This 177-nucleotide RNA was probed chemically with 2A3 and DMS. The reactions ran in a buffer of 150 mM KOAc, 10 mM MgCl2 and 150 mM bicine (pH 8.5), at 24 C.
RNA sequence: GGGAACGACUCGAGUAGAGUCGAAAAUCGUGUCAUUGCAGUAUAUAGCCCCAACGGGUGCUGUGAUGGGUAGGGGAGCGUCGUCUGCCGGGUGAAGCGGCACUGGAAGGUAGUCGUGGACGGUUGAAUUGGCCUUUAAUUUCGAUUAAAGGCCAAUAAAAGAAACAACAACAACAAC
Reactivity to 2A3 in 0.01 (KOAc 150mM, MgCl2 10mM, bicine 150mM(pH8.5), 24C), signal-to-noise 2, nucleotides 027 to 126: u090c030g000u020g050u060c020a010u000u060g020c010a010g040u020a110u020a030u080a280g030c000c000c000c000a050a070c060g030g010g010u080g000c010u010g010u030g030a050u050g000g010g050u070a050g030g010g010g000a030g000c040g030u050c010g040u030c060u050g020c020c000g080g000g090u080g040a010a010g050c020g020g000c020a020c000u020g060g060a040a090g050g000u060a070g020u050c030g030u040g020g020a010c010g020g000u010u010g030a070
Reactivity to DMS in 0.01 (KOAc 150mM, MgCl2 10mM, bicine 150mM(pH8.5), 24C), signal-to-noise 8, nucleotides 027 to 126: u010c070g020u010g010u010c030a030u010u000g010c010a040g010u000a140u010a150u010a180g010c020c000c010c090a110a140c300g000g000g020u000g010c020u000g020u010g000a030u000g000g010g010u010a070g000g000g000g000a060g010c070g000u000c050g010u000c050u000g020c020c020g020g000g010u000g010a110a130g000c030g010g000c020a040c040u000g000g020a120a080g010g010u000a080g030u000c030g020u000g000g000a040c040g000g010u000u000g010a090